[RMDB]
Structure probing data (DMS and 2A3) for a 177-nucleotide construct. It was measured as part of the RMDB library OK2TRN. Conditions: 150 mM KOAc, 10 mM MgCl2 and 150 mM bicine (pH 8.5), 24 C.
RNA sequence: GGGAACGACUCGAGUAGAGUCGAAAAGUGGAUGGCAGCUACUGGUUCCACAACCACAUAACCACCAAUUUACGCAAGUUGACCAUUGGAGGUAAGAAUUUGUCACAGCUCCAAAAGAUUUACUUGGCGGAGUGAUUAAUUUCGAUUAAUCACUCCGAAAAGAAACAACAACAACAAC
Reactivity to DMS in 0.01 (KOAc 150mM, MgCl2 10mM, bicine 150mM(pH8.5), 24C), signal-to-noise 3, nucleotides 027 to 126: g030u000g030g010a160u010g000g010c100a070g030c060u000a080c160u000g010g020u000u000c010c050a050c110a050a120c040c020a050c110a050u000a090a110c010c010a090c080c060a100a100u020u000u000a080c130g010c110a030a040g010u010u000g000a070c060c050a130u000u000g020g000a040g010g000u000a080a160g010a050a130u000u000u000g010u000c020a090c130a090g010c000u000c010c000a010a040a110a080g000a070u010u000u000a040c020u000u000g010g000
Reactivity to 2A3 in 0.01 (KOAc 150mM, MgCl2 10mM, bicine 150mM(pH8.5), 24C), signal-to-noise 3, nucleotides 027 to 126: g010u010g050g030a090u050g040g060c020a020g020c020u090a050c070u110g070g040u010u050c060c010a040c020a010a050c000c030a010c000a050u120a090a070c020c020a040c060c040a110a040u130u150u210a090c080g010c040a020a050g020u080u060g080a050c050c020a060u020u040g040g010a020g080g010u050a030a020g060a080a150u160u160u240g100u050c010a040c040a070g040c020u010c000c000a000a060a000a060g070a030u090u130u070a070c020u020u020g030g050